The record gives the reactivity of an RNA of 207 nucleotides to 2A3.

[RMDB]
RNA sequence: GGGAACGACUCGAGUAGAGUCGAAAACAGUAUUGGCGGCAGAUGCGCUAAUGAAAGAACUCGGACUGGAUGGGGAGUGAGACUUGAAUGAGUGGACCGCCUGAAGGGCUUCCUGAUUGGAUUACCGUUAGGUAGAGGAUAAUCACAUGGGCGUUAAGUACCGAAUUACGUUCGCGUAAUUCGGUACAAAAGAAACAACAACAACAAC
Reactivity to 2A3 in 0.01 (KOAc 150mM, MgCl2 10mM, bicine 150mM(pH8.5), 24C), signal-to-noise 1, nucleotides 027 to 156: c080a020g090u100a200u080u050g000g000c020g040g000c020a040g060a160u140g000c000g030c020u020a020a080u100g120a030a110a000g040a080a000c030u050c150g030g050a050c040u030g010g000a000u050g000g010g000g030a010g050u030g000a010g010a050c000u100u040g050a130a040u030g030a030g040u030g000g000a020c030c000g000c000c030u000g000a080a030g040g020g040c000u000u010c010c010u010g100a110u030u190g000g000a030u030u030a080c050c000g070u090u070a060g000g070u020a020g010a020g190g060a010u100a070a010u070c000a030c000a260u120g000g000g000c030g060u110u070a140a000

The reactions ran in a buffer of 150 mM KOAc, 10 mM MgCl2 and 150 mM bicine (pH 8.5), at 24 C.